[RMDB]
RNA sequence: GGGAACGACUCGAGUAGAGUCGAAAACGGUUGGGACUGAGGUGCCUACAACGUGUUUUUGAGUGGGCCUGUGUCUCUGUGUGCGCCGUGUGCGGAUAGCUUGCUAUGCGUGUGUGGUUGUGUGUGGGUGAUAAUCAUUGUUCGCAAUGAUUAUCACAAAAGAAACAACAACAACAAC
Reactivity to DMS in 0.01 (KOAc 150mM, MgCl2 10mM, bicine 150mM(pH8.5), 24C), signal-to-noise 3, nucleotides 027 to 126: c060g000g000u010u010g010g010g010a040c020u000g010a090g010g030u010g030c020c010u000a060c050a070a140c170g010u020g010u000u000u000u000u000g000a280g020u010g010g010g000c010c020u000g010u000g020u000c010u000c030u000g000u010g010u010g020c110g010c010c000g030u000g010u010g010c000g020g000a030u010a030g010c030u000u000g010c010u000a050u010g000c030g020u000g020u000g030u000g010g010u000u000g010u000g010u000g010u000g010g000
Reactivity to 2A3 in 0.01 (KOAc 150mM, MgCl2 10mM, bicine 150mM(pH8.5), 24C), signal-to-noise 3, nucleotides 027 to 126: c010g020g040u110u030g050g010g020a030c010u080g140a050g120g000u170g070c000c000u040a020c010a060a040c070g110u090g130u060u110u030u080u170g120a090g020u040g000g010g010c000c030u070g030u020g030u020c010u000c010u050g070u010g020u030g080c050g010c000c000g040u050g030u050g020c000g020g020a020u010a010g000c020u010u090g000c000u050a030u090g050c020g010u020g020u010g020u000g100g000u030u140g020u020g020u000g020u040g060g070

Conditions: 150 mM KOAc, 10 mM MgCl2 and 150 mM bicine (pH 8.5), 24 C. An RNA of 177 nucleotides, treated with DMS and 2A3 and read out base by base. For 2A3, 3,315 sequencing reads were counted. Values cover nucleotides 27 to 126. Values are in units of 0.01, from 0 to 300, in steps of 10. The data come from the RNA Mapping Database (RMDB), library RFMREP. DMS adducts were read by reverse transcription with MarathonRT. For DMS, 5,507 sequencing reads were counted.